[RMDB]
RNA sequence: GGGAACGACUCGAGUAGAGUCGAAAAACCAGCUCAACUGGUCGGCGUCCGGUGGAAACUACCACCAGGCUUGGGGCCGAGAGACUCAAACGGGUACGUCCGGGGUAGGAGUGAAAUCCUGUAAUCCAAUCCAUCUAGUAUUCGUACUAGAUGGAUUAAAAGAAACAACAACAACAAC
Reactivity to 2A3 in 0.01 (KOAc 150mM, MgCl2 10mM, bicine 150mM(pH8.5), 24C), signal-to-noise 9, nucleotides 027 to 126: a000c010c000a020g010c070u110c130a090a190c050u020g010g010u020c000g000g010c020g280u030c010c020g000g000u010g000g060a200a130a090c100u160a170c050c000a000c010c000a070g040g030c030u100u210g070g000g110g000c000c010g010a030g000a000g000a010c000u000c010a040a080a060c010g000g000g020u050a040c010g020u010c010c010g000g000g000g010u070a030g000g030a020g010u100g070a040a040a050u010c000c000u030g070u130a060a060u020c020c010
Reactivity to DMS in 0.01 (KOAc 150mM, MgCl2 10mM, bicine 150mM(pH8.5), 24C), signal-to-noise 9, nucleotides 027 to 126: a100c010c000a040g000c140u070c280a150a190c020u010g010g010u000c020g010g010c030g000u010c010c050g020g010u000g000g000a150a150a100c300u040a110c010c010a010c000c000a090g010g000c120u020u020g010g010g010g010c000c010g000a150g000a210g000a030c020u000c010a050a200a190c030g000g000g000u000a020c020g010u010c010c010g000g000g000g010u010a020g000g000a030g000u010g010a090a110a090u000c010c010u000g000u030a080a080u030c070c080